[RMDB]
RNA sequence: GGGAACGACUCGAGUAGAGUCGAAAAAGCGCAGCACCAGGCAGCAGUGGGUUAAGUCCUCGGGCGCAUUGAUGACAUAUUGGGCACAACUCGGGGGUACUUUGUGCUCUACAUACCGUAGUUAAUGGAUACGAUGGGGCUUCGGCCCCAUCGUAUCAAAAGAAACAACAACAACAAC
Reactivity to 2A3 in 0.01 (KOAc 150mM, MgCl2 10mM, bicine 150mM(pH8.5), 24C), signal-to-noise 1, nucleotides 027 to 126: a000g060c050g000c010a000g000c000a010c000c000a110g130g000c000a000g000c000a000g030u060g040g060g000u130u130a050a050g080u120c070c000u000c000g000g000g010c040g000c000a060u010u160g050a000u060g010a130c000a050u230a040u050u170g010g000g010c000a000c000a000a220c000u070c020g010g000g000g000g000u000a050c080u000u000u020g010u060g190c020u020c080u150a000c000a000u300a120c020c000g140u120a100g000u040u160a000a170u300g060
Chemical mapping of a 177-nucleotide RNA with 2A3. Conditions: 150 mM KOAc, 10 mM MgCl2 and 150 mM bicine (pH 8.5), 24 C. Values cover nucleotides 27 to 126. The data come from the RNA Mapping Database (RMDB), library OK1LIB. The 2A3 profile rests on 373 reads.